[RMDB]
RNA sequence: GGGAACGACUCGAGUAGAGUCGAAAAGAUAUGGAGCACUCAGCUUUUGACGGUGUGGUCGGAAACGACCACCCGAUAAGCUGGUGCUCCUAAGUCAAACGUAGCGCUUGUUCGCAAGCGCUACGAAUCUCCUACCUGAGUUCGCUCAGGUAGGAGAAAAAGAAACAACAACAACAAC
Reactivity to 2A3 in 0.01 (KOAc 150mM, MgCl2 10mM, bicine 150mM(pH8.5), 24C), signal-to-noise 2, nucleotides 027 to 126: g010a000u050a010u040g000g040a000g040c010a000c080u300c050a120g000c040u150u170u300u300g250a080c030g000g050u140g020u010g160g010u000c010g010g010a000a010a030c010g000a000c010c010a000c000c000c010g020a050u040a130a000g000c010u000g000g010u010g000c000u000c000c000u000a000a000g010u010c010a050a020a040c020g000u000a010g010c010g000c000u010u030g050u170u040c250g020c170a010a000g000c010g000c010u000a000c000g000a010a010
Reactivity to DMS in 0.01 (KOAc 150mM, MgCl2 10mM, bicine 150mM(pH8.5), 24C), signal-to-noise 1, nucleotides 027 to 126: g010a010u000a280u000g000g020a010g000c000a000c000u010c000a010g020c000u010u000u010u020g010a210c080g020g000u000g020u000g010g020u000c010g020g000a010a080a130c000g010a010c000c000a000c010c000c000g020a080u020a020a030g010c000u000g010g000u000g010c000u000c000c000u010a000a070g000u010c000a100a120a300c010g010u000a000g000c010g010c000u010u000g020u010u000c300g020c010a010a000g000c000g000c000u000a000c000g000a050a070